[RMDB]
RNA sequence: GGGAACGACUCGAGUAGAGUCGAAAAGGGAAACAAUCAAACCACUCUGUGAAGCGGCAGCGGUGGAACUGGAAACCACGGAACCGGCGAUAACAACAUGUAUUCCCGGUUUUAAGGCCGCCCUCGGCGCGUCCAAGGGAUUCGUCCCUUGGACGCGAAAAGAAACAACAACAACAAC
Reactivity to 2A3 in 0.01 (KOAc 150mM, MgCl2 10mM, bicine 150mM(pH8.5), 24C), signal-to-noise 4, nucleotides 027 to 126: g030g000g020a070a040a090c090a040a110u180c090a060a070a090c010c010a020c020u030c040u020g030u030g090a170a020g080c080g090g000c050a010g030c090g130g000u020g030g010a030a040c060u070g040g050a070a060a050c030c010a050c030g020g010a000a010c000c000g030g010c150g040a000u070a130a060c060a050a040c070a180u280g020u070a100u070u150c000c010c020g000g000u010u000u000u030a060a030g040g000c020c010g040c020c000c010u060c010g050g010
Reactivity to DMS in 0.01 (KOAc 150mM, MgCl2 10mM, bicine 150mM(pH8.5), 24C), signal-to-noise 3, nucleotides 027 to 126: g000g000g000a080a100a140c150a050a100u050c100a090a110a120c000c020a080c050u000c040u000g010u000g000a170a120g000c060g030g010c000a030g030c190g040g000u020g000g000a100a040c170u000g000g000a090a100a090c000c030a040c170g000g020a030a010c000c000g000g000c190g000a060u000a040a050c040a070a160c300a070u030g000u000a060u000u020c300c000c000g000g000u020u000u010u050a070a120g000g070c040c040g020c000c040c000u000c010g000g010
An RNA of 177 nucleotides, treated with 2A3 and DMS and read out base by base. For 2A3, 2,763 sequencing reads were counted. The reactions ran in a buffer of 150 mM KOAc, 10 mM MgCl2 and 150 mM bicine (pH 8.5), at 24 C. Source: RMDB library OK1LIB, as collected in RNAgym. As a SHAPE reagent, 2A3 marks flexible, mostly unpaired nucleotides at the ribose 2'-OH. DMS adducts were read by reverse transcription with MarathonRT.